[RMDB]
RNA sequence: GGGAACGACUCGAGUAGAGUCGAAAACGAGGCGAUAACUUCCAUAGUGUCUUAACAACAUUCAUUGACGCAGCACGAGGCCCCGCAGGUGUGGAGUCUGAUGUUGAGACCAAUGAAAUUGUUGACUGAACUGAUUCCUUCGGGAAUCAGAAAAGAAACAACAACAACAAC
Reactivity to DMS in 0.01 (KOAc 150mM, MgCl2 10mM, bicine 150mM(pH8.5), 24C), signal-to-noise 4, nucleotides 027 to 129: c120g030a080g020g060c010g010a060u040a000a000c070u040u030c060c060a090u020a100g030u000g000u040c030u000u000a070a090c070a110a050c080a070u000u000c050a060u000u000g020a000c070g010c170a050g040c040a040c150g010a070g000g000c040c000c040c000g000c040a110g090g050u070g050u050g070g010a300g030u040c000u030g030a100u020g020u090u050g010a080g030a160c020c000a050a000u000g030a070a050a140u000u000g040u000u000g000a000c050u000g060a100a180
Reactivity to 2A3 in 0.01 (KOAc 150mM, MgCl2 10mM, bicine 150mM(pH8.5), 24C), signal-to-noise 7, nucleotides 027 to 129: c030g020a040g020g040c030g030a070u040a120a100c030u060u010c070c000a060u050a080g120u090g020u000c000u070u140a080a050c040a010a000c000a040u040u060c020a010u010u040g010a020c030g000c080a030g000c020a010c050g110a050g050g000c000c000c020c000g000c030a120g000g240u200g030u050g120g040a020g010u000c010u020g100a140u020g030u020u010g030a050g030a050c020c000a010a030u040g020a040a040a050u110u060g000u010u010g050a110c010u040g010a110a010